[RMDB]
RNA sequence: GGGAACGACUCGAGUAGAGUCGAAAAGGUAUGGGAAGUAAUUUGAUUCCAAACGCUAUUUCACAACUUGUGGUAAGAGUUCAAAUUAUGCUUGCUGGUUGUAUUAGCUCUAAUGUAAAUGAUAUGCAGUGAUAACCACUUUCGAGUGGUUAUCACUAAAAGAAACAACAACAACAAC
Reactivity to DMS in 0.01 (KOAc 150mM, MgCl2 10mM, bicine 150mM(pH8.5), 24C), signal-to-noise 3, nucleotides 027 to 126: g000g020u010a100u010g010g010g020a060a100g010u000a080a080u010u000u020g010a140u020u000c010c030a060a090a130c190g000c020u000a020u010u010u010c120a040c040a060a040c090u000u000g030u000g020g020u000a070a070g010a090g000u000u010c170a070a070a120u000u010a060u020g000c040u000u000g020c010u000g000g000u010u000g000u000a030u000u000a050g020c030u010c110u010a060a070u010g000u000a020a080a060u000g010a100u020a050u000g000c240
Reactivity to 2A3 in 0.01 (KOAc 150mM, MgCl2 10mM, bicine 150mM(pH8.5), 24C), signal-to-noise 1, nucleotides 027 to 126: g060g010u110a030u090g020g020g040a000a030g040u160a090a170u030u180u080g050a040u000u050c000c000a240a000a000c050g030c010u000a030u000u150u140c080a050c000a040a040c070u030u040g060u080g080g020u060a110a000g030a040g110u100u240c050a000a080a100u210u040a050u250g020c050u020u010g010c020u040g030g050u070u060g000u010a030u020u010a050g000c020u020c050u040a180a270u200g020u150a140a070a020u110g040a110u040a010u220g050c060